Chemical mapping of a 177-nucleotide RNA with DMS and 2A3. DMS adducts were read by reverse transcription with MarathonRT. The RNA was probed in 150 mM KOAc, 10 mM MgCl2 and 150 mM bicine (pH 8.5) at 24 C. Reactivities are given for positions 27 through 126. It was measured as part of the RMDB library RFM100. For DMS, 1,670 sequencing reads were counted.

RNA sequence: GGGAACGACUCGAGUAGAGUCGAAAACUGAUCUUAAUGAGGCCAGGUGCGACGCGGGGGCAACAGCCCGGCCUCAGCGAGGUCCCCUCGGGAGGUGCCUUCCGCGUCACGGAGUGCCGUGACCGGGCCCACCUAACACGUUCGCGUGUUAGGUGGGAAAAGAAACAACAACAACAAC
Reactivity to DMS in 0.01 (KOAc 150mM, MgCl2 10mM, bicine 150mM(pH8.5), 24C), signal-to-noise 1, nucleotides 027 to 126: c080u040g000a060u010c060u030u020a070a190u040g020a000g020g010c040c020a140g010g000u040g000c160g040a060c010g050c060g010g020g000g000g000c020a090a060c140a240g000c010c000c010g000g000c010c040u030c000a100g000c260g010a030g010g000u000c020c010c070c050u020c030g000g000g000a140g000g020u020g010c020c020u020u050c050c000g020c090g000u000c000a000c030g000g020a180g060u010g040c040c010g000u040g020a030c040c020g020g000g010
Reactivity to 2A3 in 0.01 (KOAc 150mM, MgCl2 10mM, bicine 150mM(pH8.5), 24C), signal-to-noise 2, nucleotides 027 to 126: c040u040g030a050u070c030u050u080a070a090u130g030a060g020g000c030c020a040g000g000u190g100c050g010a030c040g040c030g010g000g040g000g000c000a050a020c040a100g050c000c000c000g010g000c000c000u000c000a010g040c010g000a000g000g030u070c040c010c000c000u030c030g030g030g010a090g030g010u060g080c000c000u170u120c000c000g020c050g000u010c000a000c000g060g020a150g080u120g120c000c010g010u020g000a010c000c020g020g000g000